[RMDB]
RNA sequence: GGGAACGACUCGAGUAGAGUCGAAAACGCAUGCGAGAGCAUGCGGCUAAGCUUCGGCUUAGUAAGAGCAACUUAGGAUUUAAGGCUCCCCGGCGUGUCUCGAACCAUGCCGGGCCAAACCCAUAGGGCUGGCGGUCCCUGUGCGGUCCAAAUUCCAGGUGGUAUUAUCGUUCGCGAUAAUACCACCAAAAGAAACAACAACAACAAC
Reactivity to 2A3 in 0.01 (KOAc 150mM, MgCl2 10mM, bicine 150mM(pH8.5), 24C), signal-to-noise 1, nucleotides 027 to 156: c000g000c000a000u020g010c010g020a060g010a000g050c000a000u000g000c000g000g000c000u000a010a000g000c000u010u160c280g110g000c000u000u010a000g020u020a040a010g000a000g000c000a030a140c020u040u040a010g000g070a060u040u120u140a010a060g090g030c010u030c000c000c000c000g000g000c000g010u010g020u030c060u050c290g060a030a020c020c000a000u010g000c000c020g000g010g000c000c000a030a010a000c000c000c000a000u030a020g020g000g000c030u070g110g070c080g060g050u100c000c020c000u010g000u040g010c150g000g000u000c050c040a030a060a030u130u020c020c030a020